[RMDB]
RNA sequence: GGGAACGACUCGAGUAGAGUCGAAAAGUUAUGGAAAACGUCUUAGCUACCACUACAACAACAAUGCUGGACGGUCAUGGUUCGACUUACUCGAAACCAUCACGUAGUGGUAGUCGUUCCCAUUCAAGGGCAGAUUGUAUUUCGAUACAAUCUGCCCAAAAGAAACAACAACAACAAC
Reactivity to 2A3 in 0.01 (KOAc 150mM, MgCl2 10mM, bicine 150mM(pH8.5), 24C), signal-to-noise 1, nucleotides 027 to 126: g090u080u140a040u110g090g020a140a000a060a020c000g000u000c030u090u280a070g020c000u040a100c000c230a060c100u170a180c120a180a010c030a090a030c000a070a120u160g000c000u000g000g010a020c000g070g060u000c000a030u060g110g000u000u000c010g010a000c010u010u060a010c010u000c010g000a030a030a030c000c000a000u000c030a040c170g240u300a050g000u030g000g030u020a010g000u020c000g000u000u020c000c000c000a000u040u030c000a000a000